[RMDB]
RNA sequence: GGGAACGACUCGAGUAGAGUCGAAAACCAGCUUGCCUGUGUCCUAGGGAAUUGGAAGGUCAUCCUUCACAGGAUCGUGUGGAAGUCCUGCACGGGGCGGAAGCAUUAAAACCAUUCGAGCUAGUCAAAAACCGGCUGAUCUUCGGAUCAGCCGGAAGAGUUGGAGAAUCUUCGGAUUCUCCAACUCAAAAGAAACAACAACAACAAC
Reactivity to 2A3 in 0.01 (KOAc 150mM, MgCl2 10mM, bicine 150mM(pH8.5), 24C), signal-to-noise 1, nucleotides 027 to 156: c010c000a030g010c000u050u070g050c020c000u030g010u010g030u110c040c040u100a070g050g020g070a140a200u150u070g040g010a090a000g070g050u080c000a030u150c000c010u090u130c050a040c010a050g020g000a030u100c110g020u020g000u040g020g020a010a000g030u010c030c000u080g090c120a040c150g010g020g000g000c010g000g010a010a010g010c010a000u010u190a010a080a020a100c050c020a050u050u060c050g000a000g010c000u060a050g070u170c080a060a060a020a120a160c000c000g000g000c000u000g010a000u000c020u040u010c050g020g000a040u010c000a040g000c060c000g010g000a000a000